[RMDB]
RNA sequence: GGGAACGACUCGAGUAGAGUCGAAAAAUUAGUAAUGACAACAUACAGCGCACAGCACAUUCAUUUGUAAUUGCCGGUGUGUCGCCGAUGGUUUGUUCGGCCAUCACUAACUUUGCGCCGAGUAACGACAAAACAUUUAAACUCGAUUGCUCGGUAGUAUCACUAAGGGAUUCGUCCCUUAGUGAUAAAAAGAAACAACAACAACAAC
Reactivity to DMS in 0.01 (KOAc 150mM, MgCl2 10mM, bicine 150mM(pH8.5), 24C), signal-to-noise 3, nucleotides 027 to 156: a070u010u000a010g040u000a010a030u000g010a050c010a070a020c000a040u010a060c030a090g000c050g020c110a070c040a130g000c050a010c060a050u000u000c060a210u010u010u000g040u010a080a100u000u000g020c060c040g010g020u010g010u000g010u000c020g050c050c010g000a090u000g030g000u000u010u000g020u000u000c040g110g090c010c010a000u000c010a030c020u000a010a020c040u010u000u000g010c050g020c020c010g010a060g020u000a020a060c040g000a060c060a060a090a090a150c150a180u000u000u000a100a110a150c120u000c010g020a130u000u000g000c000u010c030g040g010u000a070g020
Reactivity to 2A3 in 0.01 (KOAc 150mM, MgCl2 10mM, bicine 150mM(pH8.5), 24C), signal-to-noise 7, nucleotides 027 to 156: a010u160u120a060g050u070a070a130u100g050a050c030a110a010c020a150u240a080c060a050g010c020g000c020a010c030a040g050c010a040c020a070u040u040c030a080u090u150u300g140u230a090a070u050u050g030c080c090g100g000u020g010u020g030u110c030g010c020c020g020a010u040g040g080u080u070u120g080u060u040c050g020g000c020c000a020u030c010a000c050u080a140a040c020u050u100u150g030c040g000c000c000g000a000g000u010a000a000c010g040a010c060a040a120a040a020c050a050u120u190u300a080a130a080c050u030c040g300a300u020u030g010c000u010c000g000g000u020a030g020